[RMDB]
RNA sequence: GGGAACGACUCGAGUAGAGUCGAAAAGGGAUCCCCGGGGAACCCUACUCGAGCGAGGCGGAGUUCGAGCGCCAGUUCGUGCGCGGCGACCUGAAGUUGCUUCGGCUUCUUCUUGUUCGCGUCCUGCGUAAGGUUAGUACUUCGGUACUAACCUUACAAAAGAAACAACAACAACAAC
Reactivity to 2A3 in 0.01 (KOAc 150mM, MgCl2 10mM, bicine 150mM(pH8.5), 24C), signal-to-noise 2, nucleotides 027 to 126: g060g030g040a190u110c070c040c020c030g130g000g000g080a050a010c000c000c000u000a030c010u000c000g020a000g000c020g020a040g050g000c050g020g000a090g050u170u210c040g060a060g030c000g000c000c000a020g060u050u070c060g000u110g080c070g000c030g040g070c000g000a010c000c010u020g010a060a010g030u140u140g010c000u050u080c190g090g010c000u020u000c010u000u000c000u000u030g080u070u000c000g000c010g020u020c000c010u050g030c050
Reactivity to DMS in 0.01 (KOAc 150mM, MgCl2 10mM, bicine 150mM(pH8.5), 24C), signal-to-noise 2, nucleotides 027 to 126: g010g000g000a110u010c070c000c010c090g010g030g020g000a100a040c020c010c000u000a060c060u000c020g000a030g010c030g000a060g000g020c040g020g000a090g010u020u010c030g000a070g000c020g000c010c050a100g000u000u010c070g010u020g010c030g030c050g010g010c010g000a020c020c000u010g000a030a050g000u000u010g010c030u010u010c170g010g000c000u000u010c000u000u000c010u000u000g010u010u000c020g020c060g010u000c000c010u000g010c170
Overview
This 177-nucleotide RNA was probed chemically with 2A3 and DMS. The reactions ran in a buffer of 150 mM KOAc, 10 mM MgCl2 and 150 mM bicine (pH 8.5), at 24 C. For DMS, 2,623 sequencing reads were counted. Source: RMDB library VIROID, as collected in RNAgym.